[RMDB]
Chemical mapping of a 177-nucleotide RNA with DMS and 2A3. Source: RMDB library M2PK90, as collected in RNAgym. The reactions ran in a buffer of 150 mM KOAc, 10 mM MgCl2 and 150 mM bicine (pH 8.5), at 24 C.

RNA sequence: GGGAACGACUCGAGUAGAGUCGAAAAGCCGUGCUCGAGAGGGAGCAGAAAAUGCAGAGCUAUCCCGUCGUUUCGCUAAACAAAUGCGAAACGACAAAUUGCGUUACAUACGGAAUCCUCUAAUGAAAGUUACUUAACGGUUCGCCGUUAAGUAACUAAAAGAAACAACAACAACAAC
Reactivity to DMS in 0.01 (KOAc 150mM, MgCl2 10mM, bicine 150mM(pH8.5), 24C), signal-to-noise 3, nucleotides 027 to 126: g000c000c030g030u000g000c000u010c010g000a070g000a070g010g000g010a030g030c020a100g010a050a050a080a050u010g010c040a090g010a160g030c050u000a110u000c060c070c050g000u000c000g000u000u000u000c000g020c000u010a050a090a130c300a090a040a070u020g010c000g000a000a010a000c010g000a000c000a000a030a020u020u000g000c010g000u000u000a020c100a060u010a070c080g000g000a100a060u000c030c010u000c080u030a060a110u000g010a080a080
Reactivity to 2A3 in 0.01 (KOAc 150mM, MgCl2 10mM, bicine 150mM(pH8.5), 24C), signal-to-noise 2, nucleotides 027 to 126: g030c010c000g030u050g010c000u010c020g130a080g010a010g050g070g000a000g020c010a020g100a010a200a010a010u160g030c050a020g020a010g030c010u040a050u090c020c000c040g000u010c000g000u000u000u010c000g000c020u040a240a240a070c090a050a070a020u090g010c000g000a020a000a000c000g000a000c000a000a060a000u050u050g000c010g020u030u090a130c030a080u210a040c030g020g050a010a010u020c000c000u000c020u050a060a050u180g080a100a080